The record gives the reactivity of an RNA of 177 nucleotides to DMS and 2A3. The RNA was probed in 150 mM KOAc, 10 mM MgCl2 and 150 mM bicine (pH 8.5) at 24 C. It was measured as part of the RMDB libraries RFM100 and RFMREP.
RNA sequence: GGGAACGACUCGAGUAGAGUCGAAAACACAAGUGAGAAUUGGAUGUUAUGACCGUCCAGAAAAGACAAGAUGAGAAAGUGCAGUAUUGACUGUCUUCAAACGCACCUGUCCUUGCUCAAGUGCUGGAUACCAUCGUCCUUUCGAGGACGAUGGUAUAAAAGAAACAACAACAACAAC
Reactivity to DMS in 0.01 (KOAc 150mM, MgCl2 10mM, bicine 150mM(pH8.5), 24C), signal-to-noise 3, nucleotides 027 to 126: c100a110c120a060a130g010u050g000a100g020a160a140u010u000g020g000a110u000g020u010u030a090u020g000a120c160c070g000u000c020c000a060g000a080a030a060a090g000a010c090a060a040g010a160u010g010a100g010a090a070a060g010u030g000c000a060g000u000a170u010u010g030a050c130u000g000u000c050u000u000c080a030a060a070c070g000c050a030c060c020u000g030u000c030c020u020u010g000c010u000c020a050a170g010u020g010c020u030g000g000
Reactivity to 2A3 in 0.01 (KOAc 150mM, MgCl2 10mM, bicine 150mM(pH8.5), 24C), signal-to-noise 4, nucleotides 027 to 126: c080a000c020a030a120g080u080g080a060g050a110a140u140u030g040g010a060u010g080u130u040a120u300g100a070c070c020g000u020c000c000a010g080a010a090a000a000g030a010c030a020a050g080a140u130g020a030g120a100a080a010g070u130g000c000a010g020u050a300u130u140g070a050c060u090g090u080c000u040u050c000a080a050a060c060g020c040a020c000c000u010g000u000c000c000u020u050g010c030u040c060a140a000g020u090g070c000u080g020g050